[RMDB]
RNA sequence: GGGAACGACUCGAGUAGAGUCGAAAAGCGUACUACCUUUCAAAAAGUAGAGACAUGCGUCAAAAAUGUUCCUCCCAAAUAGGAGGAACGCCAAUGACGCAACAGCUCUAUACAAAGAAAGGUAUCGCAAAGCGUUCUAGCUUCGGCUAGAACGCAACCGACGUAAUAGCUUCGGCUAUUACGUCGGAAAAGAAACAACAACAACAAC
Reactivity to 2A3 in 0.01 (KOAc 150mM, MgCl2 10mM, bicine 150mM(pH8.5), 24C), signal-to-noise 1, nucleotides 027 to 156: g000c010g040u070a070c030u020a030c010c000u000u000u010c050a120a120a120a090a120g040u000a010g000a010g010a040c010a120u030g000c010g010u010c010a000a010a000a030a030u010g020u000u000c030c000u100c010c010c000a260a300a060u190a190g000g000a010g000g020a000a000c000g000c000c000a020a030u000g010a000c000g000c000a020a000c000a000g010c010u000c000u020a040u010a080c120a030a200a030g000a000a000a000g070g010u000a000u160c000g000c010a140a030a000g000c010g010u020u000c000u000a000g010c000u000u110c300g030g000c000u000a000g000a000a000c000g000c000a000a000